This 177-nucleotide RNA was probed chemically with DMS and 2A3. For 2A3, 2,049 sequencing reads were counted. High DMS reactivity at an A or C suggests that its Watson-Crick edge is free. Conditions: 150 mM KOAc, 10 mM MgCl2 and 150 mM bicine (pH 8.5), 24 C. 2A3 adducts were read by reverse transcription with SuperScript II with manganese. Values cover nucleotides 27 to 126. Source: RMDB library M2PK50, as collected in RNAgym. Values are in units of 0.01, from 0 to 300, in steps of 10.
RNA sequence: GGGAACGACUCGAGUAGAGUCGAAAAACCUGAUGAUUCGUCAUCAGGUCACAUGCCGCCCGAACGGCUUCCUGACCGGGCGGUUUCACUUUAAAUGGAGCACUGCUGCAUCAUUCGUGAUGCAGAAUCAUUUAGUCCCGUUCGCGGGACUAAAUGAAAAAGAAACAACAACAACAAC
Reactivity to DMS in 0.01 (KOAc 150mM, MgCl2 10mM, bicine 150mM(pH8.5), 24C), signal-to-noise 2, nucleotides 027 to 126: a030c010c010u010g010a000u000g000a040u000u020c180g010u000c000a020u000c010a010g000g000u000c060a080c150a120u000g010c000c000g000c010c000c000g020a070a150c050g020g000c040u000u010c010c000u000g000a150c140c020g010g000g010c010g010g010u000u000u010c030a080c130u020u030u010a070a110a090u010g010g000a040g000c050a140c290u000g010c010u000g000c010a010u000c000a000u000u020c140g000u000g000a000u000g000c010a010g020a070a140
Reactivity to 2A3 in 0.01 (KOAc 150mM, MgCl2 10mM, bicine 150mM(pH8.5), 24C), signal-to-noise 2, nucleotides 027 to 126: a010c000c000u020g020a010u000g000a000u000u110c200g050u020c110a000u000c000a000g000g000u020c010a050c000a040u130g010c000c000g000c020c000c010g000a030a010c110g090g010c000u170u070c010c010u010g020a050c030c010g000g000g010c050g030g000u000u130u040c030a020c000u140u120u260a070a080a110u140g010g000a010g000c030a010c070u140g040c000u010g000c010a000u000c000a010u010u120c170g100u040g000a000u010g000c000a000g000a000a040